Structure probing data (2A3 and DMS) for a 177-nucleotide construct.
For DMS, 4,448 sequencing reads were counted.
For DMS the reverse transcriptase was MarathonRT.

RNA sequence: GGGAACGACUCGAGUAGAGUCGAAAACAUGGCUUCGGCCAUGAAAAAGAUAUGGAUCGUGGGCUCCUUCCUCGGAAACGAGGAAGGAGCUAACGAUCCUAAGUCAAAAAAGGCACUUCGGUGCCAACAUGUUAGAACAGUUCGCUGUUCUAACAUGAAAAGAAACAACAACAACAAC
Reactivity to 2A3 in 0.01 (KOAc 150mM, MgCl2 10mM, bicine 150mM(pH8.5), 24C), signal-to-noise 1, nucleotides 027 to 126: c010a000u000g010g020c030u130u050c300g120g000c000c000a000u000g000a030a030a010a000a010g030a040u060a040u130g010g000a000u000c000g040u010g050g020g040c010u030c000c010u000u060c000c050u020c000g040g050a120a110a110c080g000a000g070g010a020a000g000g000a000g000c000u000a000a010c010g000a000u000c000c000u010a010a000g030u020c020a010a040a040a030a010a080g010g000c010a000c000u060u110c300g140g000u010g000c000c000a010a000
Reactivity to DMS in 0.01 (KOAc 150mM, MgCl2 10mM, bicine 150mM(pH8.5), 24C), signal-to-noise 3, nucleotides 027 to 126: c020a000u000g000g010c000u000u010c200g030g020c000c000a010u000g000a030a100a110a130a080g000a050u000a300u010g000g000a000u000c000g020u000g000g010g010c010u010c000c000u020u000c000c000u000c000g010g000a090a070a170c010g000a010g010g010a010a000g020g000a000g010c000u000a000a000c000g000a000u000c000c000u000a020a040g010u000c010a000a050a050a080a120a110g020g000c010a010c000u010u030c190g000g020u000g010c000c000a050a060
2A3 adducts were read by reverse transcription with SuperScript II with manganese. The reactions ran in a buffer of 150 mM KOAc, 10 mM MgCl2 and 150 mM bicine (pH 8.5), at 24 C.